[RMDB]
RNA sequence: GGGAACGACUCGAGUAGAGUCGAAAACUCCCCGCUCCUGGAGAAGGGAGACUCGGGAACGCCUAGCAUCUGAGGGACGAAGCCGCCCCCGGGCGCUCCCCUCGGAGAUCCACUGGGUGGGUUCACAGUACCUUAACUUGUUCGCAAGUUAAGGUACAAAAGAAACAACAACAACAAC
Reactivity to 2A3 in 0.01 (KOAc 150mM, MgCl2 10mM, bicine 150mM(pH8.5), 24C), signal-to-noise 1, nucleotides 027 to 126: c010u000c000c000c010c020g000c000u020c020c000u110g070g200a250g040a130a100g070g060g010a010g010a000c050u070c090g060g000g020a060a020c000g000c000c020u000a020g030c000a110u020c000u000g000a030g010g010g010a020c040g100a100a010g070c120c050g010c020c020c000c000c040g060g000g000c030g000c020u000c000c000c000c000u000c000g010g000a010g010a020u110c090c030a040c040u030g040g000g000u030g030g080g040u080u070c060a060c000a070
Reactivity to DMS in 0.01 (KOAc 150mM, MgCl2 10mM, bicine 150mM(pH8.5), 24C), signal-to-noise 2, nucleotides 027 to 126: c130u000c010c000c010c110g010c000u000c010c060u000g000g020a130g010a170a140g010g010g000a030g000a060c120u000c100g020g000g000a130a100c080g000c000c010u010a060g010c120a100u010c010u010g020a020g000g010g010a120c110g020a110a300g020c050c050g010c030c010c000c160c110g000g000g020c020g020c030u000c030c000c000c000u010c020g000g000a020g000a120u000c120c130a080c020u000g000g020g010u000g000g010g000u000u030c030a070c100a170